An RNA of 177 nucleotides, treated with 2A3 and DMS and read out base by base.
[RMDB]
RNA sequence: GGGAACGACUCGAGUAGAGUCGAAAAAUCGAGGAUGGAACCGGCCAUAUCAUGGUUGGUCCGUUGACCAGCGAAGCGACAGCGGAAUGGCUAACGCUGAACGGCCACAUGCCUGCCGAGAUCAUCACUGAUUCGAAAAGUUCGCUUUUCGAAUCAGAAAAGAAACAACAACAACAAC
Reactivity to 2A3 in 0.01 (KOAc 150mM, MgCl2 10mM, bicine 150mM(pH8.5), 24C), signal-to-noise 2, nucleotides 027 to 126: a010u070c010g030a030g080g040a000u010g000g040a010a060c000c000g030g000c060c040a120u070a040u170c010a000u030g240g090u090u060g020g020u080c000c020g010u030u090g090a100c100c000a000g000c010g030a040a010g010c060g130a130c070a050g010c070g120g270a150a090u160g120g000c010u020a150a060c000g000c020u010g010a000a010c000g020g000c010c030a030c000a040u040g000c000c020u050g000c020c010g040a070g000a070u040c000a000u000c010a010
Reactivity to DMS in 0.01 (KOAc 150mM, MgCl2 10mM, bicine 150mM(pH8.5), 24C), signal-to-noise 2, nucleotides 027 to 126: a070u000c030g000a150g000g010a010u010g000g010a090a080c040c000g030g030c000c210a120u000a170u020c050a030u000g010g020u030u000g020g010u020c010c020g020u000u000g020a110c300c030a000g020c040g010a210a070g000c040g020a140c200a070g010c060g050g010a130a090u010g010g000c000u010a050a110c020g000c020u000g000a030a020c040g010g000c010c000a070c010a010u000g010c160c140u000g000c020c010g000a070g000a060u000c030a010u000c020a280
The RNA was probed in 150 mM KOAc, 10 mM MgCl2 and 150 mM bicine (pH 8.5) at 24 C. The 2A3 profile rests on 1,740 reads.